RNA sequence: GGGAACGACUCGAGUAGAGUCGAAAACAUUCAGCUGGGCCAGGCUCUGCUCAACAAGAUGAGGGCUGAUGCACAGGGGGAUGCUGAGCAGCUCACCCGCUUGCAGAGCCUCCUCGGCAAAUGGCUCAAUUGAAAUGGACUUCGGUCCAUUUCAAUUAAAAGAAACAACAACAACAAC
Reactivity to DMS in 0.01 (KOAc 150mM, MgCl2 10mM, bicine 150mM(pH8.5), 24C), signal-to-noise 3, nucleotides 027 to 126: c020a020u000u000c150a160g000c030u000g020g010g000c080c090a030g020g020c010u000c000u000g000c010u000c170a060a100c150a120a120g010a040u010g000a030g000g000g010c010u000g010a140u010g000c000a010c060a110g010g040g000g000g020a300u000g010c020u000g010a020g000c000a040g000c010u010c010a040c040c030c070g020c160u000u000g000c020a010g000a020g000c000c000u000c080c010u000c020g010g000c010a160a020a020u000g000g000c000u000c020
Reactivity to 2A3 in 0.01 (KOAc 150mM, MgCl2 10mM, bicine 150mM(pH8.5), 24C), signal-to-noise 2, nucleotides 027 to 126: c000a000u050u070c050a060g000c010u010g030g020g000c070c040a010g000g020c010u010c000u020g000c010u050c130a070a180c060a070a090g040a140u150g030a090g000g000g000c010u030g000a040u120g010c020a060c130a180g000g010g020g020g000a030u010g000c000u020g050a060g120c010a030g050c020u000c010a070c020c020c030g070c090u000u100g040c010a010g000a010g000c000c010u000c010c000u020c020g000g000c000a000a030a030u000g010g010c020u010c050
An RNA of 177 nucleotides, treated with DMS and 2A3 and read out base by base. For DMS, 3,125 sequencing reads were counted. DMS adducts were read by reverse transcription with MarathonRT. Reactivities are given for positions 27 through 126. For 2A3, 2,572 sequencing reads were counted. The reactions ran in a buffer of 150 mM KOAc, 10 mM MgCl2 and 150 mM bicine (pH 8.5), at 24 C. It was measured as part of the RMDB library OK2TRN.